This 177-nucleotide RNA was probed chemically with DMS and 2A3.
RNA sequence: GGGAACGACUCGAGUAGAGUCGAAAAGAUAUGGAGUAGGCUGCGUGCAACAGCUAGAUUCGGUUCUUUUAAUUCGGAAACGAAUUAAAAGAACCGAAUCUAGACAUGCACCAGCUACUCCUAAGUCCGAUAGUAAAUCCUUCGGGAUUUACUAUCGAAAAGAAACAACAACAACAAC
Reactivity to DMS in 0.01 (KOAc 150mM, MgCl2 10mM, bicine 150mM(pH8.5), 24C), signal-to-noise 2, nucleotides 027 to 126: g000a130u000a300u000g000g000a020g020u000a030g010g040c010u010g020c300g030u010g010c010a030a140c300a240g000c000u000a010g000a010u000u000c000g000g010u000u000c010u000u000u000u000a010a010u000u000c000g010g000a080a090a260c000g010a010a010u000u000a010a000a010a000g000a000a010c010c000g020a000a000u010c000u000a000g000a010c090a190u000g000c000a010c010c000a010g000c000u010a010c010u000c000c000u000a010a080g010u000c040
Reactivity to 2A3 in 0.01 (KOAc 150mM, MgCl2 10mM, bicine 150mM(pH8.5), 24C), signal-to-noise 1, nucleotides 027 to 126: g090a030u180a080u300g020g010a020g010u040a060g300g280c040u010g040c120g150u010g010c000a090a120c040a200g030c000u000a000g000a020u010u000c000g000g000u020u020c010u050u000u000u010a030a000u010u000c010g060g000a160a090a060c010g000a000a050u000u050a000a040a000a000g000a000a010c010c010g000a000a000u000c000u000a000g010a010c010a040u040g000c000a000c010c020a000g010c010u010a000c000u040c010c010u010a160a000g080u030c030
DMS adducts were read by reverse transcription with MarathonRT.